[RMDB]
RNA sequence: GGGAACGACUCGAGUAGAGUCGAAAACGUGCCUUCAUGCUAAGGGUUUGAUAUCUGCUAAAACCCGGUGCAUUCAUCAAUGCAGGUUAAGCCAAAGGGAUGUCCCGACCGGAGGCCGCCAAUCCAGAUAGCUCAAGAAUGUUCGCAUUCUUGAGAAACUGAGACAGAACUUCGGUUCUGUCUCAGUAAAAGAAACAACAACAACAAC
Reactivity to DMS in 0.01 (KOAc 150mM, MgCl2 10mM, bicine 150mM(pH8.5), 24C), signal-to-noise 2, nucleotides 027 to 156: c050g000u000g030c010c010u000u000c030a150u000g020c140u000a270a160g000g020g000u010u030u000g000a240u000a060u000c040u000g020c070u010a120a020a010a020c000c000c060g060g030u000g000c040a090u000u000c040a040u000c040a110a160u010g050c010a100g000g040u000u000a050a110g000c000c020a020a200a300g020g010g010a110u000g010u000c010c020c000g030a180c020c040g000g040a300g010g020c010c010g000c040c010a040a100u000c050c010a260g000a090u010a160g040c000u000c000a010a020g010a040a010u000g000u010u010c300g010c000a030u000u000c020u000u000g000a010g020a010a040
Reactivity to 2A3 in 0.01 (KOAc 150mM, MgCl2 10mM, bicine 150mM(pH8.5), 24C), signal-to-noise 2, nucleotides 027 to 156: c050g070u090g070c000c010u140u130c060a050u070g030c040u030a030a050g030g010g000u030u000u000g020a030u030a120u150c100u060g020c010u050a050a000a000a000c000c000c000g030g000u020g000c000a030u030u160c050a090u080c070a090a140u160g060c030a030g030g020u130u180a080a000g020c010c000a010a020a000g010g010g030a020u040g050u050c000c000c000g000a000c020c020g010g000a010g020g020c000c000g000c000c000a030a030u020c060c000a020g070a140u070a080g070c000u000c000a000a000g020a010a000u030g000u070u100c150g000c110a000u000u000c000u000u000g000a000g000a010a000

Chemical mapping of a 207-nucleotide RNA with DMS and 2A3. For 2A3 the reverse transcriptase was SuperScript II with manganese. The reactions ran in a buffer of 150 mM KOAc, 10 mM MgCl2 and 150 mM bicine (pH 8.5), at 24 C. DMS (dimethyl sulfate) methylates the pairing face of unpaired adenines and cytosines.